Structure probing data (2A3 and DMS) for a 177-nucleotide construct. For 2A3 the reverse transcriptase was SuperScript II with manganese. Values cover nucleotides 27 to 126.

RNA sequence: GGGAACGACUCGAGUAGAGUCGAAAAUCAUCUAUGUUCGCAUAGAUGAACACAGCCUUGUAGUUUUAGUGGACUUUAGGCUAAAGAAUUUCACUAGAAAAAUAAUCGGGUGUUUCGACACCCGAAAAUCGUCUUUAAUAUUCGUAUUAAAGACGAUAAAAGAAACAACAACAACAAC
Reactivity to 2A3 in 0.01 (KOAc 150mM, MgCl2 10mM, bicine 150mM(pH8.5), 24C), signal-to-noise 3, nucleotides 027 to 126: u010c000a010u000c000u000a000u000g010u020u060c170g000c100a010u000a010g010a000u010g000a050a010c070a010c010a000g000c000c010u030u060g120u120a040g020u000u020u000u050a000g010u020g030g010a010c000u040u050u050a010g010g040c040u060a070a130a070g060a050a150u080u240u180c010a020c010u020a020g140a050a180a050a040a040u220a050a140u020c000g030g000g000u010g000u010u080u050c080g030a000c000a010c010c010c000g000a000a000a000
Reactivity to DMS in 0.01 (KOAc 150mM, MgCl2 10mM, bicine 150mM(pH8.5), 24C), signal-to-noise 3, nucleotides 027 to 126: u000c000a000u000c000u010a000u000g000u000u010c160g020c000a010u000a010g000a020u000g010a030a090c170a100c130a150g010c000c000u000u000g010u010a030g020u010u000u000u000a000g120u000g010g020a020c000u000u000u000a020g020g010c050u010a080a110a170g000a090a090u020u010u010c000a010c010u000a040g010a020a090a130a110a090u000a060a100u000c010g000g000g020u000g000u000u000u010c130g010a040c010a000c000c010c000g000a010a010a040
High DMS reactivity at an A or C suggests that its Watson-Crick edge is free. Source: RMDB library M2PK50, as collected in RNAgym.